Chemical mapping of a 177-nucleotide RNA with DMS and 2A3.
For DMS the reverse transcriptase was MarathonRT.
For DMS, 2,200 sequencing reads were counted.
Source: RMDB library OK1LIB, as collected in RNAgym.
The RNA was probed in 150 mM KOAc, 10 mM MgCl2 and 150 mM bicine (pH 8.5) at 24 C.
[RMDB]
RNA sequence: GGGAACGACUCGAGUAGAGUCGAAAACACCUGCAAGGUCAGUGCGGACAGUAGCCAUAUUUAAAGUUCCGCUUAAAUCAUAUGCACUGCCUUUUUUAACUAAACGUGGUGAUACCUGCAGUUUGUCCCCCUAAGAAUUCUUCGGAAUUCUUAGGGGAAAAGAAACAACAACAACAAC
Reactivity to DMS in 0.01 (KOAc 150mM, MgCl2 10mM, bicine 150mM(pH8.5), 24C), signal-to-noise 2, nucleotides 027 to 126: c090a090c150c030u000g000c150a000a080g020g000u020c130a030g000u000g000c010g000g000a070c130a090g020u000a070g070c170c120a070u010a080u000u050u030a070a080a110g020u060u030c070c080g000c120u000u010a070a080a030u020c110a030u050a060u040g030c060a040c010u010g000c010c010u020u040u000u000u000u080a030a140c120u030a010a000a080c160g000u000g000g020u000g000a080u030a130c000c040u000g020c050a070g000u000u000u030g000u050c070
Reactivity to 2A3 in 0.01 (KOAc 150mM, MgCl2 10mM, bicine 150mM(pH8.5), 24C), signal-to-noise 6, nucleotides 027 to 126: c030a040c000c010u030g020c060a080a130g040g070u230c100a040g150u010g050c000g020g000a030c030a050g110u120a050g110c070c080a080u080a110u120u120u140a140a150a050g060u140u050c040c040g000c050u000u110a050a060a020u080c030a040u060a040u250g030c010a000c030u020g010c000c000u030u010u000u030u040u100a130a100c080u060a120a040a060c070g060u070g010g020u020g030a060u130a160c000c000u020g010c030a040g020u010u100u110g060u050c000